Notes
The data come from the RNA Mapping Database (RMDB), library OK3TST. The record gives the reactivity of an RNA of 207 nucleotides to DMS and 2A3. For 2A3 the reverse transcriptase was SuperScript II with manganese. Conditions: 150 mM KOAc, 10 mM MgCl2 and 150 mM bicine (pH 8.5), 24 C.
RNA sequence: GGGAACGACUCGAGUAGAGUCGAAAACAAACAUGGGAAUCACUCUGAUGUGACGCAGUUAAAUUUACACCUUAAAAAAUGGAUGCCAAGACAACAUAAACAAGACCCAGGGACACCAACAGGGUAUGGUGCUGUGCCCCAGAGUCAGGGUCCUGGAUGACGAAAAUGAUUUCGAUCAUUUUCGUCAAAAAGAAACAACAACAACAAC
Reactivity to DMS in 0.01 (KOAc 150mM, MgCl2 10mM, bicine 150mM(pH8.5), 24C), signal-to-noise 1, nucleotides 027 to 156: c040a010a140a130c110a120u010g000g030g000a180a090u000c020a090c010u000c060u000g000a040u000g040u000g010a070c060g010c090a080g000u040u010a050a100a100u000u020u000a070c080a020c000c000u000u000a010a020a040a150a060a110u010g040g040a110u000g000c020c030a050a020g050a130c000a100a110c040a080u020a080a090a080c040a070a170g000a070c030c020c010a110g020g050g020a030c050a080c030c030a040a010c060a070g000g050g050u000a020u010g030g000u000g000c070u020g000u020g000c020c000c000c000a130g010a120g000u000c040a150g000g020g000u000c020c030u000g000g020a300
Reactivity to 2A3 in 0.01 (KOAc 150mM, MgCl2 10mM, bicine 150mM(pH8.5), 24C), signal-to-noise 2, nucleotides 027 to 156: c040a000a050a000c060a180u180g010g000g040a010a050u040c000a010c060u080c050u040g080a140u100g040u080g030a020c030g010c010a020g030u050u090a000a090a160u050u060u120a040c050a160c030c030u070u130a160a040a030a000a010a050u110g060g020a030u070g000c020c010a020a020g040a050c040a060a010c000a150u130a070a140a000c070a050a020g040a070c000c000c000a030g010g000g070a030c010a020c110c050a050a070c020a040g030g000g000u040a050u040g040g000u020g010c040u010g020u020g000c000c020c000c000a050g010a010g130u070c100a040g050g000g000u020c030c000u020g030g020a000